[RMDB]
RNA sequence: GGGAACGACUCGAGUAGAGUCGAAAAGAAACGCAAGGCCGCUGACCGACGGGAUAUUGUGGGGCUUACCACAGGGGACGCGGCGUUAUCACUAGCCUUUUAAGCCGACCGUCUGGGCUGCAUACAAACCACCCAACUAUCUUCGGAUAGUUGGGAACAAAUUGUAUGGCUUCGGCCAUACAAUUUGAAAAGAAACAACAACAACAAC
Reactivity to DMS in 0.01 (KOAc 150mM, MgCl2 10mM, bicine 150mM(pH8.5), 24C), signal-to-noise 2, nucleotides 027 to 156: g020a100a040a030c070g030c040a060a080g010g030c010c030g010c030u000g000a180c020c070g020a090c050g010g010g010a100u000a070u000u030g040u000g000g000g000g050c110u010u020a100c000c020a030c060a080g010g000g020g000a150c120g010c060g010g010c000g040u000u000a080u010c070a080c080u000a110g010c010c020u000u030u000u010a080a060g000c040c060g000a090c010c000g010u000c010u000g000g000g010c040u000g000c040a080u000a080c080a060a060a100c050c030a180c010c000c000a010a020c000u000a000u020c000u000u000c300g040g010a000u000a020g020u000u000g000g000g000a000a030
Reactivity to 2A3 in 0.01 (KOAc 150mM, MgCl2 10mM, bicine 150mM(pH8.5), 24C), signal-to-noise 2, nucleotides 027 to 156: g000a010a010a020c060g000c060a120a010g110g000c000c000g010c000u020g070a060c000c030g050a020c050g060g000g050a060u050a090u220u120g020u050g000g010g050g040c100u080u140a090c000c020a010c010a030g000g000g000g010a000c010g000c010g010g030c000g030u010u010a040u040c000a020c180u020a050g000c000c010u060u060u000u130a090a020g030c000c030g050a090c000c030g020u040c030u030g000g070g000c010u040g000c010a060u090a120c090a030a110a070c020c060a020c040c000c000a010a020c000u000a000u000c000u010u010c070g100g000a010u000a000g000u000u000g000g000g000a000a000